[RMDB]
RNA sequence: GGGAACGACUCGAGUAGAGUCGAAAAUGAGGUUCAGGACUGGACUUCAACCGACCAUGAUAGAGCGGAUCCUCAGCCAAUGGCCUCCGCGGAUCCGCGUUGAGCUCACUUAGGUCACCAGUCAUCGCACUCGAGACGUCUUCGGACGUCUCGAGUGAAAAGAAACAACAACAACAAC
Reactivity to DMS in 0.01 (KOAc 150mM, MgCl2 10mM, bicine 150mM(pH8.5), 24C), signal-to-noise 1, nucleotides 027 to 126: u020g000a040g010g010u000u030c080a060g000g020a070c100u000g000g010a080c070u000u010c100a020a150c190c010g010a050c100c120a080u000g000a050u000a110g020a060g000c010g000g000a010u000c010c000u010c080a290g000c020c010a170a110u010g020g000c020c040u000c110c240g040c190g030g030a030u000c000c010g010c030g020u010u010g000a120g020c220u000c000a020c140u000u010a160g000g000u000c000a170c040c050a030g000u000c030a110u010c150g000